[RMDB]
RNA sequence: GGGAACGACUCGAGUAGAGUCGAAAAGCAAGAUUCGUCUUGCGGGGUACCUUUGUGGUUUGCAAGCUUUUGACGAGUACCUGAGAGCCCAUUGGGCUCUCCUGUACUCGAUAAGCUUGCAGUGACCACUCUGGUUGAAUCAUGCCUUCGGGCAUAAAUUCCAUGAAAACUUCGGUUUUCAUGGAAUAAAAGAAACAACAACAACAAC
Reactivity to 2A3 in 0.01 (KOAc 150mM, MgCl2 10mM, bicine 150mM(pH8.5), 24C), signal-to-noise 2, nucleotides 027 to 156: g010c000a000a010g010a040u140u190c220g080u020c100u020u000g000c040g040g010g020g020u110a020c000c000u030u030u020g000u000g020g000u070u150u020g000c010a010a020g010c000u100u130u120u200g110a080c050g000a000g000u000a000c010c040u010g000a000g000a000g000c040c000c270a300u230u300g020g000g020c000u010c000u000c010c000u000g000u000a000c010u000c010g000a000u000a000a000g000c000u010u010g010c000a010g000u070g070a010c000c000a000c010u000c000u000g000g030u000u140g080a070a130u150c040a010u060g000c000c000u050u090c300g060g000g020c010a000u070a010a060
Reactivity to DMS in 0.01 (KOAc 150mM, MgCl2 10mM, bicine 150mM(pH8.5), 24C), signal-to-noise 1, nucleotides 027 to 156: g000c020a000a040g000a050u000u010c240g030u000c010u000u000g010c000g010g010g000g020u000a040c020c040u020u010u000g050u010g020g030u000u000u000g030c020a010a030g010c010u000u020u010u000g020a220c100g010a070g000u010a000c000c020u010g000a020g040a030g030c020c010c020a300u010u010g030g050g010c000u020c000u000c010c020u000g030u000a010c000u000c000g000a040u000a030a060g010c000u000u000g020c000a010g020u010g010a060c010c000a010c010u000c050u020g000g040u020u000g010a120a180u000c030a050u000g000c020c000u000u020c300g010g050g000c000a010u000a040a100